Overview:
Structure probing data (2A3 and DMS) for a 207-nucleotide construct. 2A3 is a SHAPE reagent: it acylates the 2'-hydroxyl of flexible nucleotides of all four kinds. The 2A3 profile rests on 2,098 reads. Values are in units of 0.01, from 0 to 300, in steps of 10. Values cover nucleotides 27 to 156. 2A3 adducts were read by reverse transcription with SuperScript II with manganese. The DMS profile rests on 1,694 reads.
[RMDB]
RNA sequence: GGGAACGACUCGAGUAGAGUCGAAAAACAGAAAAAAGGAGUUUAAAUUAGAUUUGCAAACGGACAGUACUAAAUACCGUCACUUUUACGUCUAACUUAUCGUUAACUCUGCAAAAAGAAAACAAGAAAAACAAGCGUGAGUUCGCUCACGCUUGAACAUCUGUGAUAUCUUCGGAUAUCACAGAUGAAAAGAAACAACAACAACAAC
Reactivity to 2A3 in 0.01 (KOAc 150mM, MgCl2 10mM, bicine 150mM(pH8.5), 24C), signal-to-noise 3, nucleotides 027 to 156: a000c030a040g100a020a150a010a030a000a060g030g010a030g020u080u070u070a070a090a080u050u070a030g030a040u100u090u180g060c060a020a040a030c040g020g020a010c000a020g040u040a030c060u200a060a080a090u120a050c030c010g010u050c040a130c120u060u060u020u090a060c020g000u000c010u030a040a050c030u090u030a040u170c030g080u060u030a030a010c020u010c040u060g050c060a070a060a080a010a040g070a050a060a020a020c060a030a070g080a100a090a020a010a010c000a000a010g000c000g000u010g000a000g010u050u080c120g030c050u000c000a000c000g000c000u000u000g000a000a000
Reactivity to DMS in 0.01 (KOAc 150mM, MgCl2 10mM, bicine 150mM(pH8.5), 24C), signal-to-noise 1, nucleotides 027 to 156: a100c030a220g010a000a050a050a020a100a170g000g000a060g010u000u000u000a020a030a030u000u000a000g000a010u000u000u030g050c030a010a000a020c140g010g020a050c000a000g000u010a070c000u050a130a090a300u000a000c050c040g050u000c030a080c110u010u000u000u000a000c000g000u000c010u000a000a020c000u000u000a060u000c120g030u000u010a050a040c010u000c000u000g010c080a100a100a070a050a050g030a130a070a070a150c050a050a210g010a010a130a140a130a070c030a000a020g000c000g030u020g000a040g000u000u000c300g040c000u000c000a030c000g010c000u010u000g000a030a120